[RMDB]
RNA sequence: GGGAACGACUCGAGUAGAGUCGAAAAGAUAUGGAUAGGGUCUUCGUAACGUUUGACGUCGGAAACGACCGAGUUACGGGAGAGAAACCCUAUCCUAAGUCAAAAGAAUCGGCUUCGGCCGAUUCAACGACAGUAUGAGGUUCGCCUCAUACUGUCGAAAAGAAACAACAACAACAAC
Reactivity to 2A3 in 0.01 (KOAc 150mM, MgCl2 10mM, bicine 150mM(pH8.5), 24C), signal-to-noise 2, nucleotides 027 to 126: g040a000u090a010u170g000g010a000u000a000g000g010g040u070c020u100u040c010g000u000a030a010c020g070u000u300u300g130a080c060g010u010c000g020g000a030a070a100c020g000a000c030c010g010a010g040u020u000a010c040g030g110g040a170g000a000g050a170a170a010c000c000c000u000a000u000c000c000u000a010a010g020u000c000a050a020a010a170g010a020a000u000c010g000g000c000u100u140c300g100g000c000c000g000a010u030u000c000a010a000
Reactivity to DMS in 0.01 (KOAc 150mM, MgCl2 10mM, bicine 150mM(pH8.5), 24C), signal-to-noise 3, nucleotides 027 to 126: g000a030u010a300u000g000g000a020u000a000g000g000g000u000c020u000u030c000g000u000a020a010c000g010u010u010u000g010a230c300g010u000c000g010g010a130a090a220c010g010a010c000c020g000a070g000u000u000a010c000g020g000g000a050g020a050g030a130a140a120c000c000c000u000a000u000c000c000u000a020a050g010u010c010a050a080a100a190g000a010a010u000c000g000g000c000u000u040c190g000g030c020c000g010a000u010u000c010a100a110

Description
This 177-nucleotide RNA was probed chemically with 2A3 and DMS. The DMS profile rests on 2,028 reads. For DMS the reverse transcriptase was MarathonRT. 2A3 adducts were read by reverse transcription with SuperScript II with manganese. For 2A3, 3,221 sequencing reads were counted. The data come from the RNA Mapping Database (RMDB), library TTRDEL. The reactions ran in a buffer of 150 mM KOAc, 10 mM MgCl2 and 150 mM bicine (pH 8.5), at 24 C.